This 177-nucleotide RNA was probed chemically with DMS and 2A3. It was measured as part of the RMDB library VIROID. For DMS, 10,523 sequencing reads were counted. The RNA was probed in 150 mM KOAc, 10 mM MgCl2 and 150 mM bicine (pH 8.5) at 24 C. 2A3 adducts were read by reverse transcription with SuperScript II with manganese. The 2A3 profile rests on 12,387 reads. Reactivities are given for positions 27 through 126. High 2A3 reactivity points to a flexible backbone, as in loops and unpaired stretches.
RNA sequence: GGGAACGACUCGAGUAGAGUCGAAAAUUACUGGCACUCCCUUAGCCAUCCGAGUGGACGUGCGUCCUCCUUCGGAUGCCCAGGUCGGACCGCGAGGAGGUGGAGAUGCCAUGCCGACCCGAAGAGGCUACAGUUAGUAGUUCGCUACUAACUGUAGAAAAGAAACAACAACAACAAC
Reactivity to DMS in 0.01 (KOAc 150mM, MgCl2 10mM, bicine 150mM(pH8.5), 24C), signal-to-noise 8, nucleotides 027 to 126: u010u010a130c120u000g010g010c020a040c030u000c010c010c210u000u000a120g020c140c020a040u010c000c000g010a100g010u000g000g010a030c040g010u010g020c140g010u010c000c010u000c090c110u010u000c030g010g010a040u000g010c050c020c050a090g010g000u000c050g000g010a300c030c080g010c120g000a110g000g010a050g010g020u000g010g010a040g010a130u000g000c010c010a020u000g020c050c030g000a070c010c020c040g010a070a070g000a090g000g000
Reactivity to 2A3 in 0.01 (KOAc 150mM, MgCl2 10mM, bicine 150mM(pH8.5), 24C), signal-to-noise 6, nucleotides 027 to 126: u070u040a050c050u010g000g010c000a010c010u020c000c030c000u030u150a060g010c020c020a060u000c010c010g050a050g090u120g020g040a040c070g140u240g090c130g030u080c010c010u040c010c070u100u090c020g000g000a020u040g010c000c000c010a030g000g040u030c020g030g060a110c030c020g050c060g030a070g040g010a020g010g060u060g010g000a020g030a090u030g000c000c000a010u050g010c000c020g060a060c010c000c010g070a120a040g040a050g110g000